An RNA of 177 nucleotides, treated with 2A3 and DMS and read out base by base. The DMS profile rests on 2,044 reads. The 2A3 profile rests on 1,877 reads. For DMS the reverse transcriptase was MarathonRT.
RNA sequence: GGGAACGACUCGAGUAGAGUCGAAAAAGGACUCCUUCUCUUCCCGCUCGGGAUUUCUUCGUCUCGGACCGGCUCAUCUUCGGCAAAGGGCGGCGGUCCUCAGUGCUCUUACUCUUUUCUGUAAAGAUCAAGAGAUAUUCUUCGGAAUAUCUCUUGAAAAAGAAACAACAACAACAAC
Reactivity to 2A3 in 0.01 (KOAc 150mM, MgCl2 10mM, bicine 150mM(pH8.5), 24C), signal-to-noise 2, nucleotides 027 to 126: a040g050g000a060c030u040c030c000u070u060c020u020c000u030u000c000c010c010g020c040u030c000g020g010g020a030u060u040u030c020u040u020c020g050u010c020u010c050g020g020a060c020c000g020g020c020u030c030a140u000c040u160u090c030g040g020c070a110a070a090g010g010g030c020g020g050c010g010g010u020c000c000u000c020a040g010u030g020c010u000c000u090u040a070c010u030c020u070u130u080u020c030u070g100u090a120a070a020g060a050
Reactivity to DMS in 0.01 (KOAc 150mM, MgCl2 10mM, bicine 150mM(pH8.5), 24C), signal-to-noise 2, nucleotides 027 to 126: a090g020g000a080c060u000c040c040u000u010c040u000c030u010u000c030c010c030g010c110u010c040g000g020g010a060u000u000u000c050u010u000c080g000u000c030u010c050g010g020a140c040c020g000g000c040u000c050a110u000c070u000u000c040g000g010c130a060a070a130g000g010g020c070g010g000c100g000g010u000c030c020u000c080a060g030u010g010c040u010c030u010u000a070c050u000c020u010u000u000u010c070u010g000u010a080a110a110g000a140